The record gives the reactivity of an RNA of 177 nucleotides to DMS. The data come from the RNA Mapping Database (RMDB), library TTRINS. Conditions: 150 mM KOAc, 10 mM MgCl2 and 150 mM bicine (pH 8.5), 24 C.
RNA sequence: GGGAACGACUCGAGUAGAGUCGAAAAGAUAUGGACGCCAGGACAUGCUCCACAUCAUUCAUGGUUAGACUCGGAAACGAGUCUAACCAUGAAUGAUGGAGAGCAACAGCCUGUGCGUCCUAAGUCACAAUGGUUAUAUGUUCGCAUAUAACCAUUGAAAAGAAACAACAACAACAAC
Reactivity to DMS in 0.01 (KOAc 150mM, MgCl2 10mM, bicine 150mM(pH8.5), 24C), signal-to-noise 7, nucleotides 027 to 126: g000a050u000a300u000g000g010a010c010g010c000c000a010g010g010a060c090a240u000g010c000u000c000c300a220c000a000u000c000a010u000u000c000a010u000g000g010u000u000a010g010a010c000u000c000g000g000a100a110a230c010g000a020g010u000c000u000a000a000c000c000a000u000g000a010a000u000g010a000u000g010g000a230g000a010g010c000a020a040c300a200g000c010c000u000g010u010g020c000g000u000c000c000u000a010a070g010u000c040a240